[RMDB]
RNA sequence: GGGAACGACUCGAGUAGAGUCGAAAAUGAUUGAGCGUAGCACACACUCAGUCUGUACGACAGUCUGACACACACCUACGCUAGUGCAUCGUGUGUGUGAUAUCGAUGUAGCACGAAAAUGAAGUAAGAGGCCUAGUGUAUUCGUACACUAGGCCUCAAAAGAAACAACAACAACAAC
Reactivity to 2A3 in 0.01 (KOAc 150mM, MgCl2 10mM, bicine 150mM(pH8.5), 24C), signal-to-noise 2, nucleotides 027 to 126: u240g010a100u100u110g050a010g000c000g000u050a000g010c050a010c000a000c000a010c060u000c000a000g000u040c020u030g000u040a090c130g030a040c080a010g000u010c000u030g030a010c010a010c000a000c000a000c110c030u020a030c040g060c070u040a030g080u060g070c000a000u000c020g010u000g000u010g000u000g000u020g100a050u030a010u190c040g010a000u020g040u110a050g000c030a000c070g070a030a010a010a070u220g040a040a000g050u090a110a030
Reactivity to DMS in 0.01 (KOAc 150mM, MgCl2 10mM, bicine 150mM(pH8.5), 24C), signal-to-noise 3, nucleotides 027 to 126: u000g010a090u000u020g000a090g040c010g000u000a080g040c130a030c120a070c020a080c120u000c020a030g020u000c000u000g050u000a100c110g010a130c020a050g010u000c020u000g000a060c050a070c050a030c100a050c120c060u000a000c080g010c060u010a060g010u010g030c030a070u000c060g040u010g010u000g010u000g010u000g010a140u000a050u000c040g000a070u000g010u000a050g010c090a070c050g000a020a040a100a120u030g000a090a040g010u040a060a140
This 177-nucleotide RNA was probed chemically with 2A3 and DMS. Conditions: 150 mM KOAc, 10 mM MgCl2 and 150 mM bicine (pH 8.5), 24 C. Source: RMDB library M2PK90, as collected in RNAgym. For DMS the reverse transcriptase was MarathonRT.